[RMDB]
Overview
An RNA of 177 nucleotides, treated with 2A3 and DMS and read out base by base. The RNA was probed in 150 mM KOAc, 10 mM MgCl2 and 150 mM bicine (pH 8.5) at 24 C. For 2A3, 2,706 sequencing reads were counted. For DMS, 1,441 sequencing reads were counted. 2A3 adducts were read by reverse transcription with SuperScript II with manganese.
RNA sequence: GGGAACGACUCGAGUAGAGUCGAAAACUUGGGCACUUCGGUGCCCAAGAAACGCUCAACCUCAGAGCGCAAAAGUCCAACGAAUACAGUUCGACAUGAGGAAAACGGACCCGUUCGCGGGUCCGAACGUUGGAAUUAUGUUCGCAUAAUUCCAACGAAAAGAAACAACAACAACAAC
Reactivity to 2A3 in 0.01 (KOAc 150mM, MgCl2 10mM, bicine 150mM(pH8.5), 24C), signal-to-noise 1, nucleotides 027 to 126: c000u000u000g010g000g060c020a020c030u050u020c230g110g000u010g010c000c000c000a000a000g000a000a000a000c010g000c000u000c020a120a080c000c010u000c000a000g000a000g000c010g000c050a300a290a020a000g000u000c050c020a000a010c010g060a080a050u300a220c110a080g020u000u010c010g030a000c020a030u010g000a010g000g000a040a000a050a000c010g000g000a010c020c000c020g030u060u060c280g030c000g110g000g000u000c000c000g000a030a000
Reactivity to DMS in 0.01 (KOAc 150mM, MgCl2 10mM, bicine 150mM(pH8.5), 24C), signal-to-noise 2, nucleotides 027 to 126: c000u000u000g030g000g020c000a000c010u010u010c210g030g030u010g000c010c000c000a000a000g010a070a070a200c010g000c000u000c000a050a160c020c000u000c000a000g010a000g020c010g050c180a050a070a010a030g010u000c000c090a020a010c070g000a250a150u000a130c180a100g000u000u010c200g030a000c010a020u010g000a030g000g010a080a050a070a090c020g000g010a030c000c000c010g000u000u000c170g020c010g000g010g020u000c000c000g010a000a020